Structure probing data (2A3 and DMS) for a 177-nucleotide construct.
RNA sequence: GGGAACGACUCGAGUAGAGUCGAAAAAAAAGAUAUGGACGUAACUCCCCACCGUAGCCCACUCUUUGAUCUUCUAUCGGAAACGAUAGAAGGGAGAGUGGCUACGAGGUUACGUCCUAAGUCAAAACACAUCUUAGUACUUCGGUACUAAGAUGUGAAAAGAAACAACAACAACAAC
Reactivity to 2A3 in 0.01 (KOAc 150mM, MgCl2 10mM, bicine 150mM(pH8.5), 24C), signal-to-noise 4, nucleotides 027 to 126: a000a000a020a010g040a040u070a040u100g000g000a000c010g010u000a010a010c000u080c040c030c010c000a010c000c000g010u000a000g050c100c110c020a040c010u040c000u300u300u030g020a030u030c000u010u000c000u000a010u010c000g010g020a030a010a000c000g000a000u000a000g000a010a000g000g000g000a040g010a000g000u000g000g000c000u000a000c000g000a000g000g000u000u000a000c010g000u000c000c000u010a000a000g010u010c020a040a060a110a080
Reactivity to DMS in 0.01 (KOAc 150mM, MgCl2 10mM, bicine 150mM(pH8.5), 24C), signal-to-noise 6, nucleotides 027 to 126: a060a060a090a110g010a030u000a090u010g000g000a030c000g010u000a010a010c000u010c090c000c000c030a300c050c000g000u000a000g010c240c030c020a010c000u000c000u010u000u010g010a090u000c000u000u000c000u000a010u010c010g000g000a050a040a070c000g000a010u000a000g000a010a000g000g010g000a000g010a010g020u000g000g010c000u000a000c000g000a030g020g000u000u000a000c000g020u000c000c000u000a000a050g000u000c020a090a090a090a200
The reactions ran in a buffer of 150 mM KOAc, 10 mM MgCl2 and 150 mM bicine (pH 8.5), at 24 C. DMS adducts were read by reverse transcription with MarathonRT.